Conditions: 150 mM KOAc, 10 mM MgCl2 and 150 mM bicine (pH 8.5), 24 C.
An RNA of 177 nucleotides, treated with 2A3 and DMS and read out base by base.
DMS (dimethyl sulfate) methylates the pairing face of unpaired adenines and cytosines.
For 2A3, 12,372 sequencing reads were counted.
RNA sequence: GGGAACGACUCGAGUAGAGUCGAAAAGAUAUGGAGUGCAACAGCAAGAACUACAGCGCCUAUCGGAAACGAUAGGCCAGCUGCUUGACAUGCACUCCUAAGUCAAAGGCUGCGUUCGCGCAGCCAAUCACUAAGGAAGGUUCGCCUUCCUUAGUGAAAAAGAAACAACAACAACAAC
Reactivity to 2A3 in 0.01 (KOAc 150mM, MgCl2 10mM, bicine 150mM(pH8.5), 24C), signal-to-noise 5, nucleotides 027 to 126: g030a000u060a030u170g000g000a000g000u000g010c030a110a100c060a300g150c030a050a050g030a180a100c190u300a080c300a000g000c010g020c010c010u000a000u000c010g000g010a070a050a010c010g000a010u000a000g000g030c010c010a010g010c000u030g000c010u050u030g020a140c010a110u070g000c000a000c000u000c000c000u000a040a000g010u000c050a140a060a110g010g010c000u010g000c010g050u060u120c300g000c000g000c140a000g000c000c000a000a010
Reactivity to DMS in 0.01 (KOAc 150mM, MgCl2 10mM, bicine 150mM(pH8.5), 24C), signal-to-noise 5, nucleotides 027 to 126: g010a020u010a300u020g000g020a010g020u000g010c010a030a120c180a200g010c020a020a010g010a110a040c090u010a300c020a020g030c040g010c000c000u010a000u020c000g010g010a110a100a120c000g000a010u000a010g010g010c100c130a000g020c010u000g000c020u000u000g010a080c080a210u000g000c000a000c010u000c000c000u000a010a070g020u010c040a120a140a130g010g000c000u000g020c000g020u000u010c290g010c010g010c000a010g020c000c010a000a040